[RMDB]
RNA sequence: GGGAACGACUCGAGUAGAGUCGAAAAACCUGAUGAUUCGUCAUCAGGUCACAUGCCGCCCGAACGGCUUCCUGAGCGGGCGGAUUCACUUUAAAUGGAGCACUGCUGCAUCAUUCGUGAUGCAGAAUGUAAAGAUCCUAUUCGUAGGAUCUUUACAAAAAGAAACAACAACAACAAC
Reactivity to DMS in 0.01 (KOAc 150mM, MgCl2 10mM, bicine 150mM(pH8.5), 24C), signal-to-noise 8, nucleotides 027 to 126: a030c000c000u000g000a000u000g000a030u000u010c180g020u000c000a000u000c000a000g000g000u000c050a050c150a090u010g010c000c010g000c010c000c000g010a040a070c060g010g010c030u000u010c010c010u000g000a120g010c010g010g000g010c000g010g000a010u010u010c090a080c160u010u010u010a050a080a090u010g010g000a040g000c030a170c240u020g010c000u000g000c000a010u000c000a040u000u010c170g020u000g010a010u000g000c000a000g000a050a050
Reactivity to 2A3 in 0.01 (KOAc 150mM, MgCl2 10mM, bicine 150mM(pH8.5), 24C), signal-to-noise 9, nucleotides 027 to 126: a000c000c000u000g000a000u000g000a010u010u100c180g060u010c100a000u000c000a000g000g010u010c010a060c000a040u140g020c000c000g000c020c000c000g010a040a020c040g080g000c000u210u120c020c010u010g000a010g020c000g000g010g000c020g010g000a010u090u080c050a050c090u150u200u260a080a150a100u140g010g000a010g010c010a020c120u170g000c010u000g000c010a000u000c000a020u040u110c190g090u030g000a000u000g000c010a000g000a010a010

Structure probing data (DMS and 2A3) for a 177-nucleotide construct. Conditions: 150 mM KOAc, 10 mM MgCl2 and 150 mM bicine (pH 8.5), 24 C. For DMS the reverse transcriptase was MarathonRT. 2A3 adducts were read by reverse transcription with SuperScript II with manganese. For DMS, 17,497 sequencing reads were counted. It was measured as part of the RMDB library M2PK50.